Description:
This 177-nucleotide RNA was probed chemically with DMS and 2A3. The DMS profile rests on 2,292 reads. The reactions ran in a buffer of 150 mM KOAc, 10 mM MgCl2 and 150 mM bicine (pH 8.5), at 24 C. Source: RMDB library M2PK50, as collected in RNAgym. Values cover nucleotides 27 to 126. For 2A3, 876 sequencing reads were counted.
RNA sequence: GGGAACGACUCGAGUAGAGUCGAAAAACGAUGUCGUUCGCGACAUCGUAAAUUGUAUAACCUUGCUUGAAGUCUAGUUGGUUGUAAAGCGAGACAAGUCAGUGAGAGUCCUAUUCGUAGGACUCAAUGAGACGGUAAUGUUCGCAUUACCGUCUCAAAAAGAAACAACAACAACAAC
Reactivity to DMS in 0.01 (KOAc 150mM, MgCl2 10mM, bicine 150mM(pH8.5), 24C), signal-to-noise 2, nucleotides 027 to 126: a040c000g000a000u000g010u000c010g030u000u000c180g020c010g010a010c000a000u000c000g010u000a010a040a060u000u010g020u000a120u010a060a110c060c020u000u000g020c000u010u000g000a120a100g000u000c020u010a090g010u010u000g000g010u000u000g010u010a070a060a020g020c040g000a040g000a070c050a060a120g010u010c060a090g010u000g030a170g000a020g000u000c000c000u000a020u000u000c150g010u000a010g010g000a000c000u000c000a010a090
Reactivity to 2A3 in 0.01 (KOAc 150mM, MgCl2 10mM, bicine 150mM(pH8.5), 24C), signal-to-noise 1, nucleotides 027 to 126: a000c000g000a020u000g000u000c030g070u070u080c100g030c010g110a000c000a000u010c000g000u000a020a000a000u100u080g070u000a170u000a100a060c030c000u000u030g040c030u020u050g020a090a020g020u070c020u140a030g210u300u110g090g040u080u060g050u120a010a000a010g040c000g040a010g000a020c060a100a130g090u050c040a000g050u070g240a160g000a020g040u000c000c000u010a020u010u080c150g020u040a000g000g000a010c000u000c010a000a020